Structure probing data (2A3 and DMS) for a 177-nucleotide construct.
DMS (dimethyl sulfate) methylates the pairing face of unpaired adenines and cytosines.
Conditions: 150 mM KOAc, 10 mM MgCl2 and 150 mM bicine (pH 8.5), 24 C.
For DMS the reverse transcriptase was MarathonRT.
The data come from the RNA Mapping Database (RMDB), library OK1LIB.
RNA sequence: GGGAACGACUCGAGUAGAGUCGAAAAUACGCUGGUAGCAGCAAGUAGCAGCUCUAUCCGCAGAUGAGCGGAAUAUACAGAUGAAAAUGGAUCUCGAUAGAGGUGCUACAAUCGAGACCAUUAGAGACGUAGCGAUACCAUUCGUGGUAUCGCUACGAAAAGAAACAACAACAACAAC
Reactivity to 2A3 in 0.01 (KOAc 150mM, MgCl2 10mM, bicine 150mM(pH8.5), 24C), signal-to-noise 3, nucleotides 027 to 126: u170a000c060g000c010u020g040g080u160a080g180c040a000g000c020a040a070g060u020a020g020c010a010g000c000u000c000u010a040u020c010c030g040c080a010g110a300u200g150a100g070c000g000g070a000a000u140a000u020a050c050a010g120a090u120g220a150a130a040a000u080g020g080a180u010c000u000c000g000a000u010a010g040a010g020g090u060g000c000u010a010c080a000a010u000c000g010a010g010a000c000c010a000u010u140a080g070a030g000a010
Reactivity to DMS in 0.01 (KOAc 150mM, MgCl2 10mM, bicine 150mM(pH8.5), 24C), signal-to-noise 2, nucleotides 027 to 126: u050a100c220g010c000u020g010g000u090a190g080c040a040g000c000a240a180g030u000a000g030c000a050g000c000u020c010u000a100u000c000c030g050c000a100g010a240u030g020a140g000c000g000g050a060a070u020a080u000a130c240a090g000a090u030g010a230a050a020a050u020g010g120a100u000c000u000c000g020a020u040a060g010a060g000g030u000g010c020u000a000c000a080a050u010c020g010a020g000a030c000c000a000u000u000a040g000a160g000a290